Structure probing data (DMS and 2A3) for a 177-nucleotide construct. Reactivities are rounded to 0.1 and cut off at 0 and 3. The RNA was probed in 150 mM KOAc, 10 mM MgCl2 and 150 mM bicine (pH 8.5) at 24 C.
RNA sequence: GGGAACGACUCGAGUAGAGUCGAAAACUACAUAGUUUCGACUAUGUAGAAACCAUUAGGAAGCAAGCAGAUGCAUAUGGACGAGGGCAACUAACCUAUUGCGAACAGCAGGUUUCGACCUGCUGAAGAAUUAGAGUGACUUCGGUCACUCUAAUUCAAAAGAAACAACAACAACAAC
Reactivity to DMS in 0.01 (KOAc 150mM, MgCl2 10mM, bicine 150mM(pH8.5), 24C), signal-to-noise 5, nucleotides 027 to 126: c000u010a000c000a010u000a010g020u000u010u030c170g020a050c000u000a000u000g020u000a010g000a060a110a170c040c010a090u010u010a080g020g000a100a060g010c070a070a090g010c060a050g000a070u000g010c040a040u000a070u000g010g010a070c100g010a080g000g010g010c050a030a050c070u010a060a080c050c040u000a090u000u010g010c070g000a090a190c020a010g000c000a000g010g000u000u000u010c160g000a030c000c000u000g000c000u000g000a030a060
Reactivity to 2A3 in 0.01 (KOAc 150mM, MgCl2 10mM, bicine 150mM(pH8.5), 24C), signal-to-noise 4, nucleotides 027 to 126: c000u010a000c000a000u010a000g020u040u060u080c210g070a030c000u010a000u000g000u000a000g020a030a000a010c020c000a040u060u140a070g060g080a060a050g000c040a040a030g020c010a030g040a140u100g010c030a040u060a070u180g040g010a030c040g020a060g020g020g000c010a040a020c030u060a010a050c010c010u050a110u060u180g060c070g060a070a020c010a010g000c000a000g000g010u020u060u080c120g050a020c000c000u000g000c000u000g000a010a010

It was measured as part of the RMDB library M2PK50.